Structure probing data (DMS and 2A3) for a 177-nucleotide construct. For 2A3, 1,333 sequencing reads were counted. For DMS, 1,273 sequencing reads were counted. Values cover nucleotides 27 to 126. Conditions: 150 mM KOAc, 10 mM MgCl2 and 150 mM bicine (pH 8.5), 24 C.
RNA sequence: GGGAACGACUCGAGUAGAGUCGAAAAUAUGGUAAAGAGUCUCUUGAGAACCAUUCUUACAUUUACCAUUCUGCGUUCACUGAUUGUGGAGGCUGCGGUAAUGGUUCAUGGCUUACAGGGAACGCUGCGUCCACAUACUCUUCGGAGUAUGUGGACGAAAAGAAACAACAACAACAAC
Reactivity to DMS in 0.01 (KOAc 150mM, MgCl2 10mM, bicine 150mM(pH8.5), 24C), signal-to-noise 2, nucleotides 027 to 126: u020a010u010g010g010u000a010a090a090g010a230g000u000c040u010c030u010u010g010a290g020a110a070c030c010a010u000u010c100u000u010a140c030a070u010u000u020a000c000c000a040u000u010c070u000g030c010g000u000u000c010a030c020u000g010a200u010u000g020u000g020g000a030g000g020c040u010g000c210g020g010u000a030a020u000g000g000u000u000c030a050u000g000g010c090u000u010a160c150a070g020g010g000a030a050c030g000c030u000g000
Reactivity to 2A3 in 0.01 (KOAc 150mM, MgCl2 10mM, bicine 150mM(pH8.5), 24C), signal-to-noise 2, nucleotides 027 to 126: u080a010u010g020g020u080a060a070a020g080a100g080u000c030u000c000u090u080g080a010g010a090a040c040c000a060u060u090c060u050u090a060c000a050u110u050u040a010c000c000a000u030u090c050u090g040c020g110u000u020c030a040c080u050g140a260u300u120g030u070g060g040a030g090g000c070u080g030c000g000g040u100a030a010u020g030g000u040u000c030a030u030g010g050c040u070u060a050c070a020g110g000g000a050a000c010g000c070u080g010